About this RNA:
This 177-nucleotide RNA was probed chemically with 2A3 and DMS. Source: RMDB library OK2TST, as collected in RNAgym. The reactions ran in a buffer of 150 mM KOAc, 10 mM MgCl2 and 150 mM bicine (pH 8.5), at 24 C. DMS adducts were read by reverse transcription with MarathonRT.

[RMDB]
RNA sequence: GGGAACGACUCGAGUAGAGUCGAAAAUGUGGAGGAGUAUGCCGAGUACAAUGUGUUCACACUGGACCACCCACAGCCUGGCCAGCCCACAGUCCACAUCGGCGGCGAUGACAUUGCAGAGCAAUGAAGAGCUAGUAGGGUUCGCCCUACUAGCUCUAAAAGAAACAACAACAACAAC
Reactivity to 2A3 in 0.01 (KOAc 150mM, MgCl2 10mM, bicine 150mM(pH8.5), 24C), signal-to-noise 1, nucleotides 027 to 126: u090g030u010g000g060a080g030g000a070g100u070a060u130g000c040c050g000a020g050u060a070c040a070a050u080g100u010g070u210u160c020a020c030a030c170u020g040g000a030c060c020a040c020c030c000a090c030a040g080c000c010u010g020g000c010c010a000g020c020c000c000a030c040a000g080u000c010c060a040c010a080u020c010g000g000c060g010g050c020g100a050u090g000a030c000a020u020u020g000c070a100g040a010g250c000a010a000u050g040a090
Reactivity to DMS in 0.01 (KOAc 150mM, MgCl2 10mM, bicine 150mM(pH8.5), 24C), signal-to-noise 1, nucleotides 027 to 126: u010g010u010g010g010a120g000g000a180g010u010a060u010g020c030c050g030a140g020u010a050c120a040a080u000g040u000g000u000u000c060a060c090a060c030u000g010g000a130c020c040a100c040c010c000a060c150a100g000c040c040u020g000g000c050c000a120g000c000c000c030a070c150a070g000u010c040c040a060c020a060u000c050g000g010c050g000g000c060g010a070u000g010a170c100a010u010u010g010c000a170g010a170g020c040a030a030u010g000a130